RNA sequence: GGGAACGACUCGAGUAGAGUCGAAAAAGUGACGUCGACGACCGGGACUACUACACGCUCGCGUACGCCGAACGACGGGGGCUCGAGCGCGACCUCGCGACGGCGGAGUUCGAUGUCGAGGGCACCGCUCCUUUUACGAGUUCGCUCGUAAAAGGAGAAAAGAAACAACAACAACAAC
Reactivity to 2A3 in 0.01 (KOAc 150mM, MgCl2 10mM, bicine 150mM(pH8.5), 24C), signal-to-noise 9, nucleotides 027 to 126: a000g160u110g040a010c020g030u020c010g000a030c010g020a030c030c020g020g020g080a070c030u130a050c020u090a060c180a040c120g050c020u040c010g030c050g030u070a090c010g010c010c000g080a250a130c040g200a120c020g010g000g000g020g020c030u040c110g110a120g060c080g020c030g060a080c010c000u000c010g020c000g020a050c010g000g000c000g020g010a060g020u090u030c020g000a030u040g010u020c010g000a110g010g030g020c050a020c070c010g010
Reactivity to DMS in 0.01 (KOAc 150mM, MgCl2 10mM, bicine 150mM(pH8.5), 24C), signal-to-noise 4, nucleotides 027 to 126: a080g000u020g020a020c030g040u000c000g000a030c050g020a110c090c000g010g000g010a090c090u000a110c220u020a130c170a080c190g010c050u000c020g030c110g030u000a110c010g010c000c010g010a130a070c050g000a120c000g020g010g000g020g000c030u020c060g010a150g020c140g000c070g010a110c010c000u000c010g000c030g010a200c050g000g000c010g030g000a070g000u040u000c020g020a040u000g010u000c000g000a060g000g000g000c070a140c030c050g020